[RMDB]
RNA sequence: GGGAACGACUCGAGUAGAGUCGAAAAAGACACCCAGUGAGGAGAAUGAGAGUCCCCUCAAACCUCCAGGCAUAUGUAUGGAUGAAAGUGUGUCCUUGUCUCACUCAGGAUCAGCCCCCGAUGUGCCGGCCGUGAGUGUCAUUGUCAAGAACACCAGGCUAUUACCAAAGUUCGCUUUGGUAAUAGCAAAAGAAACAACAACAACAAC
Reactivity to 2A3 in 0.01 (KOAc 150mM, MgCl2 10mM, bicine 150mM(pH8.5), 24C), signal-to-noise 3, nucleotides 027 to 156: a000g090a000c030a030c010c000c010a020g040u060g070a030g010g030a050g010a110a170u110g000a020g000a010g100u010c020c010c010c000u010c000a060a100a100c000c010u000c010c010a020g010g020c070a030u090a040u210g050u080a020u110g060g100a030u050g080a110a070a080g080u090g010u010g000u080c020c000u000u030g020u000c010u000c050a010c000u000c000a010g040g160a300u050c010a050g050c000c030c010c020c090g040a030u090g050u060g030c020c000g020g010c010c030g120u080g020a010g000u020g020u030c030a020u060u110g010u020c020a020a000g020a060a010c020a000c110c040a020g120
Reactivity to DMS in 0.01 (KOAc 150mM, MgCl2 10mM, bicine 150mM(pH8.5), 24C), signal-to-noise 2, nucleotides 027 to 156: a180g000a240c030a080c010c000c010a180g050u030g010a060g030g010a050g000a070a130u000g010a160g010a190g010u000c010c000c010c000u000c000a050a060a160c070c030u000c010c000a100g030g000c020a110u010a080u000g000u000a110u010g020g010a090u000g010a080a120a090g040u000g010u000g020u000c020c020u000u000g020u020c020u000c010a010c020u010c040a080g010g000a070u010c010a060g010c000c020c030c030c240g000a110u000g010u020g050c020c030g030g020c010c010g020u000g000a040g030u000g030u030c050a080u010u000g000u010c020a030a060g000a030a020c000a030c020c050a150g020